[RMDB]
RNA sequence: GGGAACGACUCGAGUAGAGUCGAAAAGAUAUGGAUUACAAUAGAUCCGAGUGCGUUGAAAUCGGAAACGAUGGAGCACUCAGGAUCUUCUGUAAUCCUAAGUCAAACCUUAGGUUCGCCUAAGGAACACCAGACAAAAGUUCGCUUUUGUCUGGUGAAAAGAAACAACAACAACAAC
Reactivity to 2A3 in 0.01 (KOAc 150mM, MgCl2 10mM, bicine 150mM(pH8.5), 24C), signal-to-noise 2, nucleotides 027 to 126: g020a000u050a040u210g000g010a000u020u000a020c030a050a000u050a130g000a000u000c000c000g000a010g000u000g030c000g250u300u060g040a050a040a010u000c000g020g040a070a050a050c000g000a010u000g070g030a040g000c000a000c000u020c000a010g010g010a000u000c000u010u030c010u000g000u000a000a010u010c000c010u010a020a000g010u000c020a110a060a170c000c000u010u010a010g090g060u020u090c300g140c060c000u000a000a000g000g000a010a020
Reactivity to DMS in 0.01 (KOAc 150mM, MgCl2 10mM, bicine 150mM(pH8.5), 24C), signal-to-noise 2, nucleotides 027 to 126: g020a020u000a300u010g000g000a020u000u000a020c010a000a040u000a010g000a000u000c000c010g000a030g020u000g020c000g010u030u000g000a070a170a040u000c000g000g000a140a070a170c030g000a010u000g000g000a090g010c000a000c000u000c000a010g040g010a000u000c000u000u000c100u000g020u000a000a000u000c000c000u010a020a050g010u000c020a090a100a240c000c000u010u000a000g000g010u000u000c230g020c000c020u000a000a010g000g000a060a100

Source: RMDB library TTRDEL, as collected in RNAgym. Structure probing data (2A3 and DMS) for a 177-nucleotide construct. DMS adducts were read by reverse transcription with MarathonRT. Reactivities are given for positions 27 through 126.